RNA sequence: GGGAACGACUCGAGUAGAGUCGAAAAGUUGACGGACUCGUGGACGAAGCGGGCGUAGGAGUCUUGCAAGCGGAGGACGAGCUCGGCGGUGACGAGGACGUCGAGGGCGCAGUAGUCGAGGGUCUGCUUGACGAGAUCGUAGCGCUCAUCGUGGGUCACCCAUAUCAUAUUUCGAUAUGAUAUGGGUAAAAGAAACAACAACAACAAC
Reactivity to 2A3 in 0.01 (KOAc 150mM, MgCl2 10mM, bicine 150mM(pH8.5), 24C), signal-to-noise 3, nucleotides 027 to 156: g070u050u050g030a030c030g020g010a000c000u010c030g080u080g140g080a020c050g060a050a020g120c080g020g000g010c020g010u030a070g060g150a050g050u020c020u040u060g060c060a090a040g050c070g050g070a030g040g030a030c010g020a030g040c000u000c000g060g000c010g010g080u100g010a020c030g000a020g020g030a010c000g000u000c000g000a040g010g020g030c050g000c030a070g040u160a010g030u030c010g030a080g020g060g100u030c040u040g050c000u040u040g030a090c010g010a010g010a060u050c040g070u140a050g030c010g000c000u010c000a070u010c020g000u080g040g000g000u010c020
Reactivity to DMS in 0.01 (KOAc 150mM, MgCl2 10mM, bicine 150mM(pH8.5), 24C), signal-to-noise 3, nucleotides 027 to 156: g030u010u010g000a110c020g020g010a060c020u000c010g040u010g030g000a090c040g000a090a140g020c040g010g020g020c010g010u020a140g000g030a290g020u000c000u020u000g040c050a090a180g030c120g030g010a190g000g010a170c020g000a200g010c010u010c010g020g040c020g000g020u000g000a090c030g000a040g020g010a060c060g010u000c020g010a060g010g040g020c000g010c010a140g040u010a140g010u000c030g010a080g000g030g010u000c110u000g000c030u010u000g010a080c000g000a200g000a130u000c060g020u010a150g000c030g020c040u000c020a050u000c030g000u010g010g000g010u000c070
Source information:
Chemical mapping of a 207-nucleotide RNA with 2A3 and DMS. Reactivities are given for positions 27 through 156. For DMS, 5,776 sequencing reads were counted. It was measured as part of the RMDB library OK3TST. DMS adducts were read by reverse transcription with MarathonRT. For 2A3, 2,674 sequencing reads were counted.